Record summary: Conditions: 150 mM KOAc, 10 mM MgCl2 and 150 mM bicine (pH 8.5), 24 C. The record gives the reactivity of an RNA of 170 nucleotides to DMS and 2A3. DMS adducts were read by reverse transcription with MarathonRT. For 2A3 the reverse transcriptase was SuperScript II with manganese.
RNA sequence: GGGAACGACUCGAGUAGAGUCGAAAAAUAGGGGCACCCACAAUAGGAUGGCAAAAGGGGACUCGGGUCCGUCGUUCCAUCCUUUUCUUACCUUUUGGCCGGCAUGGCCCCAGCCUCCUCGCUGGCGACGGAGUACGCUUCGGCGUACUCAAAAGAAACAACAACAACAAC
Reactivity to DMS in 0.01 (KOAc 150mM, MgCl2 10mM, bicine 150mM(pH8.5), 24C), signal-to-noise 8, nucleotides 027 to 129: a020u050a090g010g010g000g040c000a180c010c010c020a090c160a080a080u060a080g000g000a080u000g010g020c100a020a020a070a050g030g000g020g010a040c000u010c160g010g020g030u000c000c020g050u000c040g000u000u000c000c030a050u050c040c020u020u000u010u000c060u010u030a150c080c030u000u000u010u000g010g010c010c000g020g040c070a060u040g000g050c030c010c000c020a110g000c050c000u030c050c030u020c070g020c050u000g010g010c050g000a220c140g000
Reactivity to 2A3 in 0.01 (KOAc 150mM, MgCl2 10mM, bicine 150mM(pH8.5), 24C), signal-to-noise 8, nucleotides 027 to 129: a000u180a050g000g000g000g000c000a040c010c020c000a060c020a020a050u090a030g050g010a030u030g010g040c080a010a050a020a020g060g010g010g010a010c030u050c130g170g000g060u020c040c030g080u040c020g040u070u030c000c000a030u040c010c000u030u030u040u030c040u070u120a150c020c000u070u090u080u100g110g000c010c010g000g040c020a060u070g050g010c000c010c000c000a020g010c000c000u030c000c000u030c020g020c010u020g010g000c010g010a040c030g030
Source: RMDB library 15KLIB, as collected in RNAgym.